[RMDB]
RNA sequence: GGGAACGACUCGAGUAGAGUCGAAAAACACCAUCAUUCCUUUCGGAUGCAGUUGCAGGGUGGAGAUGGUCCACAUGUGGUUGACGCUGCCUUCCACGGCGGCCUGCAGAGCCAGUGCCUUGCCGUGAUCGACUUCUAAGUUCGCUUAGAAGUCGAUAAAAGAAACAACAACAACAAC
Reactivity to DMS in 0.01 (KOAc 150mM, MgCl2 10mM, bicine 150mM(pH8.5), 24C), signal-to-noise 7, nucleotides 027 to 126: a110c150a060c020c010a030u010c030a130u000u000c010c010u000u010u010c150g010g010a070u000g010c040a050g020u000u000g030c040a060g000g010g020u000g000g000a150g000a060u000g000g000u000c010c010a020c030a110u010g020u000g020g020u000u010g010a100c100g000c010u000g020c020c100u010u000c070c010a030c020g020g020c010g010g000c010c000u000g000c020a230g010a150g000c170c010a010g000u010g010c020c010u000u010g040c000c010g020u000g000
Reactivity to 2A3 in 0.01 (KOAc 150mM, MgCl2 10mM, bicine 150mM(pH8.5), 24C), signal-to-noise 5, nucleotides 027 to 126: a000c040a000c000c010a010u040c010a050u040u080c010c000u070u180u240c090g060g030a070u070g000c000a040g020u170u200g090c070a060g180g010g080u030g040g010a100g010a100u070g010g070u020c010c010a050c020a060u130g080u100g130g130u090u130g020a040c030g010c020u020g000c000c030u080u000c040c000a000c010g000g000c000g010g000c000c010u000g000c020a130g040a050g300c080c000a040g010u120g120c010c000u050u190g000c010c000g000u010g030
Conditions: 150 mM KOAc, 10 mM MgCl2 and 150 mM bicine (pH 8.5), 24 C. Structure probing data (DMS and 2A3) for a 177-nucleotide construct. 2A3 is a SHAPE reagent: it acylates the 2'-hydroxyl of flexible nucleotides of all four kinds. It was measured as part of the RMDB library OK2TRN. For DMS the reverse transcriptase was MarathonRT. DMS (dimethyl sulfate) methylates the pairing face of unpaired adenines and cytosines.